[RMDB]
RNA sequence: GGGAACGACUCGAGUAGAGUCGAAAAGAUAUUAACGCGCGUGCUGUGUCUAACGCGAAUUACCCAGUUAUUUUCGACUUUACUCGAGUCGUUAUAGCGUCAUAUGACACAGUUAUCCGCGAACGAAUCUCGUGUCGAGAUUCGUCUCGACACGAGAAAAAGAAACAACAACAACAAC
Reactivity to DMS in 0.01 (KOAc 150mM, MgCl2 10mM, bicine 150mM(pH8.5), 24C), signal-to-noise 3, nucleotides 027 to 126: g000a140u010a070u010u020a070a140c160g030c000g000c070g030u000g000c040u000g020u000g010u000c010u010a130a010c030g000c000g010a080a060u000u000a100c090c070c080a110g000u010u000a090u000u000u000u000c010g000a030c000u000u000u000a010c010u000c000g000a000g010u010c000g000u000u000a020u000a090g020c000g010u000c090a090u000a070u000g000a030c010a010c020a050g010u000u000a050u010c130c030g000c040g010a070a090c140g000a110a080
The record gives the reactivity of an RNA of 177 nucleotides to DMS. Values cover nucleotides 27 to 126. Values are in units of 0.01, from 0 to 300, in steps of 10. The RNA was probed in 150 mM KOAc, 10 mM MgCl2 and 150 mM bicine (pH 8.5) at 24 C.